[RMDB]
RNA sequence: GGGAACGACUCGAGUAGAGUCGAAAAAACUUGAGUUUAUCUGUCUAGUGACCUUGCAGCUGCACAGCUAGGGAAACAGGAUCUUCACAGUGCCUGGGAAAGGAGGAGAGAUAAGGCUCACUAGCCACCCACAAUACGGGUUCGCCCGUAUUGUGGGAAAAGAAACAACAACAACAAC
Reactivity to 2A3 in 0.01 (KOAc 150mM, MgCl2 10mM, bicine 150mM(pH8.5), 24C), signal-to-noise 1, nucleotides 027 to 126: a000a050c000u080u110g020a000g020u000u000u090a060u050c020u000g260u010c000u040a030g030u030g100a030c000c000u000u010g030c070a030g070c000u120g050c130a020c020a050g000c060u040a050g060g020g110a010a070a090c080a060g080g080a020u040c030u120u140c160a000c070a170g030u030g170c000c000u070g000g040g140a110a060a080g050g040a050g010g050a000g020a000g000a010u040a120a000g070g060c030u000c020a010c000u020a000g050c000c010a050
Reactivity to DMS in 0.01 (KOAc 150mM, MgCl2 10mM, bicine 150mM(pH8.5), 24C), signal-to-noise 1, nucleotides 027 to 126: a060a020c110u010u000g010a030g020u010u000u000a120u010c030u010g010u050c010u000a120g020u000g030a050c020c020u080u000g040c150a060g000c030u000g010c100a080c110a100g010c030u000a110g010g010g010a150a070a190c110a040g000g000a180u010c020u000u020c110a030c190a110g010u000g000c010c000u000g000g010g000a040a060a030g020g000a200g010g030a040g010a030g000a050u000a040a000g010g040c110u000c020a030c130u010a060g000c060c040a180
Description: Structure probing data (2A3 and DMS) for a 177-nucleotide construct. For 2A3, 705 sequencing reads were counted. As a SHAPE reagent, 2A3 marks flexible, mostly unpaired nucleotides at the ribose 2'-OH. Reactivities are given for positions 27 through 126. Source: RMDB library OK2TRN, as collected in RNAgym.